Structure probing data (DMS) for a 177-nucleotide construct. The RNA was probed in 150 mM KOAc, 10 mM MgCl2 and 150 mM bicine (pH 8.5) at 24 C.
RNA sequence: GGGAACGACUCGAGUAGAGUCGAAAACAGAAUGAAAACAUAAAGCAAACAGACCUGGCCUAAUCUGUAAGGCUCAAAGGAAAAUUCUUUAAGAAAGUGAGUUGGAAACAGAGACAUGAAAGGUGAGCACCCUUGUAGUGUUCGCACUACAAGGGUGAAAAGAAACAACAACAACAAC
Reactivity to DMS in 0.01 (KOAc 150mM, MgCl2 10mM, bicine 150mM(pH8.5), 24C), signal-to-noise 2, nucleotides 027 to 126: c110a080g030a080a040u010g000a070a100a080a150c070a100u000a080a080a080g000c060a040a140a080c060a110g000a080c020c010u000g040g000c050c010u010a110a060u000c020u000g000u030a120a180g010g000c000u000c080a010a080a060g010g020a080a070a020a100u010u020c010u010u010u000a070a060g010a100a040a050g020u000g010a030g020u000u000g010g000a050a070a070c000a010g000a050g000a080c070a050u000g010a050a040a090g010g000u000g000a110g010